[RMDB]
Conditions: 150 mM KOAc, 10 mM MgCl2 and 150 mM bicine (pH 8.5), 24 C. Chemical mapping of a 177-nucleotide RNA with 2A3 and DMS. The 2A3 profile rests on 6,516 reads. It was measured as part of the RMDB library TTRDES.
RNA sequence: GGGAACGACUCGAGUAGAGUCGAAAAGAUAUGGAUGCACGUAGAGCGAUAAGAAGGUCUCGGAAACGAGACCCUUCUUUUGACGCUCGAGGUGCAUCCUAAGUCAAAACCGGUCUUCGGACCGGAAUCAUGUUUAGCAGUUCGCUGCUAAACAUGAAAAAGAAACAACAACAACAAC
Reactivity to 2A3 in 0.01 (KOAc 150mM, MgCl2 10mM, bicine 150mM(pH8.5), 24C), signal-to-noise 2, nucleotides 027 to 126: g040a010u090a040u200g000g000a000u000g000c000a000c030g040u080a000g000a000g010c020g030a070u010a120a020g010a000a000g000g000u020c000u020c010g040g010a040a070a050c010g000a000g000a010c000c000c000u000u000c000u000u070u030u090g190a050c040g000c010u000c000g000a000g000g000u000g000c010a000u000c000c010u010a010a000g000u000c000a000a020a070a120c020c010g000g000u010c020u070u100c240g140g000a000c000c000g000g000a000a050
Reactivity to DMS in 0.01 (KOAc 150mM, MgCl2 10mM, bicine 150mM(pH8.5), 24C), signal-to-noise 5, nucleotides 027 to 126: g000a050u000a300u010g000g000a020u000g020c010a000c010g000u010a300g000a010g020c000g010a150u000a010a000g010a020a010g000g010u000c000u000c010g000g000a100a080a220c010g010a010g000a020c130c070c010u010u000c000u000u000u010u000g020a190c090g000c000u010c000g010a150g010g010u000g000c000a000u000c000c000u000a010a090g010u000c030a110a040a130a180c000c000g000g000u000c000u000u020c230g020g010a020c000c000g000g010a030a040